RNA sequence: GGGAACGACUCGAGUAGAGUCGAAAAUCCGUCGCGAGAUCGAGCGGACAGUAGCUGCACGGCGUUGUGGUACUGAUAAAAGACCAUGUGGAUGUUCGAGGGGGACUUUGCACAGAUUCUGAACGACUUAUAAAGCGUGUUAGACGGAAAUACUCCGAGUUUAUCCGUAGUUCGCUACGGAUAAACUAAAAGAAACAACAACAACAAC
Reactivity to DMS in 0.01 (KOAc 150mM, MgCl2 10mM, bicine 150mM(pH8.5), 24C), signal-to-noise 1, nucleotides 027 to 156: u020c030c030g010u000c010g000c110g000a080g030a070u010c040g000a170g020c000g020g060a120c020a150g050u000a060g010c040u010g040c000a080c040g050g000c020g090u010u020g040u000g010g040u020a160c080u000g030a190u000a110a060a090a100g000a120c040c030a100u000g020u010g010g000a100u000g030u000u010c050g010a160g000g010g030g050g040a070c000u000u000u000g030c060a150c060a050g000a130u000u000c040u000g010a040a060c090g000a060c060u030u000a100u030a070a090a050g000c010g040u000g010u000u020a120g000a090c050g000g020a070a070a040u000a130c030u000c000c030g000
Reactivity to 2A3 in 0.01 (KOAc 150mM, MgCl2 10mM, bicine 150mM(pH8.5), 24C), signal-to-noise 3, nucleotides 027 to 156: u000c010c000g050u040c040g010c050g080a070g000a250u090c030g010a030g090c020g020g020a020c030a010g030u040a060g060c040u030g040c020a030c080g210g000c100g160u180u060g020u050g030g050u060a080c020u030g040a070u110a070a100a050a030g020a030c000c030a040u060g030u050g010g040a040u020g020u120u030c060g070a170g000g010g000g000g000a000c030u060u050u070g000c030a020c000a050g080a290u070u010c000u030g040a090a000c020g080a030c010u050u090a110u110a150a160a010g060c060g030u040g050u040u040a050g000a040c010g040g000a030a070a030u130a050c030u030c020c030g010
Record summary: An RNA of 207 nucleotides, treated with DMS and 2A3 and read out base by base. The DMS profile rests on 2,475 reads. Conditions: 150 mM KOAc, 10 mM MgCl2 and 150 mM bicine (pH 8.5), 24 C. The 2A3 profile rests on 1,280 reads. For 2A3 the reverse transcriptase was SuperScript II with manganese. Values cover nucleotides 27 to 156.